[RMDB]
Structure probing data (2A3) for a 207-nucleotide construct. For 2A3, 521 sequencing reads were counted. The data come from the RNA Mapping Database (RMDB), library M2RFPK. For 2A3 the reverse transcriptase was SuperScript II with manganese. The RNA was probed in 150 mM KOAc, 10 mM MgCl2 and 150 mM bicine (pH 8.5) at 24 C.

RNA sequence: GGGAACGACUCGAGUAGAGUCGAAAAUUUAACGCUGUUUUAUUGGCGCAAAGGUUUACGGAUAAACAACUAAUAAUUAAACCUUUUGUAUGCGAAACGUGGUUGUUUAACGUACUCUUUAAUCGCUUUGGGGAUGUGUCCUUCGGGACACAUCCAAGACAUCCCUUUACUUCGGUAAAGGGAUGUCAAAAGAAACAACAACAACAAC
Reactivity to 2A3 in 0.01 (KOAc 150mM, MgCl2 10mM, bicine 150mM(pH8.5), 24C), signal-to-noise 1, nucleotides 027 to 156: u090u080u050a040a000c020g000c030u050g110u160u090u040u100a050u070u160g050g000c000g000c050a100a000a000g050g030u050u030u010a020c050g000g010a210u130a070a010a000c010a000a000c030u120a150a110u120a140a040u240u090a100a090a120c040c000u040u060u140u080g040u110a120u090g130c080g070a070a030a020c040g060u010g000g050u020u030g000u000u000u000a080a000c000g000u010a010c020u050c050u050u170u130a090a110u030c000g030c090u100u060u130g060g000g000g030a040u000g000u000g000u000c000c000u010u060c120g050g000g030a000c000a000c000a010u000c000c000a000a000